Background
The data come from the RNA Mapping Database (RMDB), library RNAMAK. Structure probing data (2A3 and DMS) for a 207-nucleotide construct. The RNA was probed in 150 mM KOAc, 10 mM MgCl2 and 150 mM bicine (pH 8.5) at 24 C. The DMS profile rests on 4,666 reads. For 2A3 the reverse transcriptase was SuperScript II with manganese.
RNA sequence: GGGAACGACUCGAGUAGAGUCGAAAAGGUGCAGUUCGCUGCACCAAAAAAGAUAUGGAUCCGUCACCAGGGAGCGUCAUUGACUUCGGAAACGAAGUCUGACGCGAAGAACUGGUGAGCGGAUCCUAAGUCAAAAAGCUGAACUUCGGUUCAGCAACACACUGUAGAAGUUCGCUUCUACAGUGUGAAAAGAAACAACAACAACAAC
Reactivity to 2A3 in 0.01 (KOAc 150mM, MgCl2 10mM, bicine 150mM(pH8.5), 24C), signal-to-noise 3, nucleotides 027 to 156: g000g000u010g000c010a000g000u070u150c180g090c120u020g000c010a010c010c000a000a000a000a010a000a020g020a020u050a020u070g010g000a010u010c000c000g020u020c010a000c000c000a000g010g000g000a040g000c000g010u020c010a040u060u210g000a000c000u010u000c000g000g040a060a060a080c020g000a000a000g000u000c010u000g000a000c000g000c000g000a020a010g010a010a010c000u000g010g010u000g010a000g010c000g000g000a000u010c000c000u000a000a000g000u010c020a000a000a040a180a050g000c010u000g000a000a010c010u040u100c250g060g000u000u000c000a000g000c000a010a000
Reactivity to DMS in 0.01 (KOAc 150mM, MgCl2 10mM, bicine 150mM(pH8.5), 24C), signal-to-noise 2, nucleotides 027 to 156: g020g000u000g010c010a010g010u000u000c300g030c020u010g050c010a000c000c010a000a030a090a110a100a080g000a140u010a210u000g000g010a020u010c000c010g010u010c000a020c000c020a000g020g060g030a270g020c010g010u000c010a020u020u010g010a060c000u000u000c010g040g010a170a130a260c050g010a040a000g030u000c010u000g020a050c010g040c000g000a060a050g000a130a230c020u010g020g020u000g000a020g030c000g030g000a000u010c000c000u000a000a070g000u000c020a100a060a120a070a100g020c010u000g010a020a010c000u010u000c300g070g000u000u010c010a000g010c000a020a070